Structure probing data (2A3) for a 207-nucleotide construct.
The data come from the RNA Mapping Database (RMDB), library OK3TST.
For 2A3, 463 sequencing reads were counted.
[RMDB]
RNA sequence: GGGAACGACUCGAGUAGAGUCGAAAAUACACCAGUGCUUACUCGCUGACCCCCGACCCGGUCUCCGAGAGCAUGACAAUAGAGAUCGAAGCACAAUCGGUAGCUAUCCCCGGAGCAUGUACAGAUACGGACCCCGGUCGCUUACGCACGGUGGUUCCUUGACAGCACUAUUCGUAGUGCUGUCAAGAAAAGAAACAACAACAACAAC
Reactivity to 2A3 in 0.01 (KOAc 150mM, MgCl2 10mM, bicine 150mM(pH8.5), 24C), signal-to-noise 1, nucleotides 027 to 156: u180a000c040a000c010c000a020g000u000g010c040u060u120a140c020u030c140g080c090u120g090a160c010c010c000c000c060g040a040c000c020c010g050g000u000c000u020c010c030g060a060g010a040g020c010a050u070g080a040c040a080a030u080a080g040a000g040a050u070c030g010a040a010g050c020a010c000a220a030u040c070g040g000u100a030g050c010u070a010u100c000c000c030c070g050g000a010g000c010a040u110g060u140a030c040a010g180a100u200a060c010g000g000a000c000c020c010c050g080g030u110c020g040c000u080u250a020c130g010c020a000c000g000g050u050g000g030u040u030c030